Conditions: 150 mM KOAc, 10 mM MgCl2 and 150 mM bicine (pH 8.5), 24 C. This 207-nucleotide RNA was probed chemically with DMS and 2A3.

[RMDB]
RNA sequence: GGGAACGACUCGAGUAGAGUCGAAAACGGUUUCGACAGGUUGGCGAAAGCUUCCACUGUGAUGCAGGUCGAGAGUGGGUCUCCUCUCGCAAAUCAAAGAUCCAAACAAAAUGUAACUGCGAACAACAUCGUUCCUUUCGCUCGCAAAGCUGCUGCUACUCUUACUCUUGUUCGCAAGAGUAAGAGUAAAAGAAACAACAACAACAAC
Reactivity to DMS in 0.01 (KOAc 150mM, MgCl2 10mM, bicine 150mM(pH8.5), 24C), signal-to-noise 1, nucleotides 027 to 156: c020g040g000u000u010u010c010g060a110c010a040g050g020u000u010g000g030c020g000a140a040a220g040c030u050u000c050c020a100c070u000g000u080g000a080u000g000c090a110g040g030u010c050g000a050g010a070g000u000g010g000g030u000c020u000c050c010u010c070u000c000g000c030a020a010a080u000c050a100a060a020g020a070u000c030c020a040a120a240c070a050a150a030a150u010g000u000a030a050c000u020g020c010g000a030a000c050a080a080c080a070u000c020g020u010u000c000c030u000u000u000c050g040c100u000c010g050c010a040a090a300g040c000u010g030c040u000g000c010u010
Reactivity to 2A3 in 0.01 (KOAc 150mM, MgCl2 10mM, bicine 150mM(pH8.5), 24C), signal-to-noise 5, nucleotides 027 to 156: c040g020g020u050u060u070c050g030a010c020a070g000g060u040u030g020g010c010g070a070a040a020g010c030u030u020c020c020a190c090u050g050u090g040a060u080g030c040a040g040g070u110c030g000a000g000a000g030u030g000g010g020u000c020u020c000c040u000c000u000c020g140c190a030a000a000u040c020a030a000a020g010a010u050c020c000a030a110a060c080a030a070a090a060u190g060u110a080a030c050u050g020c020g040a030a020c040a020a030c010a160u050c020g020u010u030c000c000u020u070u070c060g000c050u020c020g050c030a070a100a060g010c040u080g010c020u040g010c020u040

For 2A3, 4,453 sequencing reads were counted.